[RMDB]
RNA sequence: GGGAACGACUCGAGUAGAGUCGAAAAUGACAGAUAAGACUGAGCCUUGAGUAGGUUAAGGAAGCUUUGUAAAGCUCUAGACUAUGGGUAUCUUCCUUGCCCCAAGUACCUGCUGUGUGAGAAACCUGGGGAGGGCAGGUGGUGGUUUGAAUGCGGCUCAACCCCUAAAAUUCGUUUUAGGGGUUGAAAAAGAAACAACAACAACAAC
Reactivity to 2A3 in 0.01 (KOAc 150mM, MgCl2 10mM, bicine 150mM(pH8.5), 24C), signal-to-noise 2, nucleotides 027 to 156: u130g000a010c050a050g130a100u100a130a090g020a080c050u020g050a010g040c010c000u070u060g020a010g040u070a030g020g010u110u120a010a040g000g010a040a030g000c030u050u150u200g120u240a130a100a000g000c000u030c040u040a040g030a130c070u050a100u100g010g000g010u050a040u030c030u020u000c010c000u000u030g030c000c000c000c030a020a030g000u030a070c050c000u040g000c040u050g030u040g000u060g060a060g050a070a080a020c000c010u020g010g000g000g030a030g020g010g040c040a040g040g010u010g010g060u050g020g030u040u050u000g060a050a030u040g030c010g010g000c000
Reactivity to DMS in 0.01 (KOAc 150mM, MgCl2 10mM, bicine 150mM(pH8.5), 24C), signal-to-noise 2, nucleotides 027 to 156: u000g020a150c060a300g040a120u000a090a090g000a080c040u000g000a130g000c030c020u010u000g010a100g020u000a060g000g000u000u010a050a050g000g010a050a070g010c100u000u000u010g030u000a130a080a170g030c030u000c030u010a140g020a130c020u010a150u010g000g020g040u000a120u000c030u000u000c000c020u010u000g000c040c000c020c040a030a120g010u010a110c040c000u010g000c040u000g030u000g020u020g000a130g000a100a100a060c050c020u000g030g020g020g000a120g000g030g020c060a030g000g010u010g000g020u000g000g000u050u010u000g010a050a070u010g000c040g000g040c060